RNA sequence: GGGAACGACUCGAGUAGAGUCGAAAAAGUGUUACGAGGUUUGAACGAACAACCUAUAGUCACAAACCAUCUGCAUUUCCAAGAAUGGCUGAGAAAGAGAGAUGGUUCUGCUUUGGCGAAACUGGAUAGUGAGGUCGGUUAUAUUACUACUUGGCGAAGUAGAGCGAUUUUUCGAAAUCGCUCUACUAAAAGAAACAACAACAACAAC
Reactivity to 2A3 in 0.01 (KOAc 150mM, MgCl2 10mM, bicine 150mM(pH8.5), 24C), signal-to-noise 2, nucleotides 027 to 156: a000g080u040g040u060u050a010c040g030a020g040g060u050u010u220g080a170a030c030g050a050a030c040a040a040c020c000u110a110u090a150g030u050c020a030c020a050a060a000c030c000a030u000c010u060g000c030a030u020u030u000c050c010a000a020g070a060a210u190g130g000c060u050g060a050g050a230a040a000g070a000g000a000g000a020u000g000g000u010u000c050u020g000c000u030u050u040g020g000c030g020a050a060a030c010u020g040g000a040u040a030g040u060g080a000g010g040u050c050g010g010u000u000a030u000a000u090u030a030c030u000a010c010u120u000g050g000c090g030a030
Reactivity to DMS in 0.01 (KOAc 150mM, MgCl2 10mM, bicine 150mM(pH8.5), 24C), signal-to-noise 1, nucleotides 027 to 156: a170g040u000g000u000u000a110c080g000a170g010g020u000u010u050g050a120a180c110g020a130a160c040a050a050c020c040u000a050u010a140g050u000c040a090c020a050a020a010c000c000a090u000c020u000g000c030a300u000u010u030c040c020a090a220g050a170a090u020g020g000c070u020g020a200g000a010a080a120g010a150g000a070g000a040u000g000g040u000u020c070u000g090c000u000u000u000g010g010c050g020a050a090a100c080u000g060g000a050u020a080g030u010g020a000g010g010u010c040g090g000u000u000a100u000a030u000u000a030c040u000a050c070u000u000g010g020c090g020a110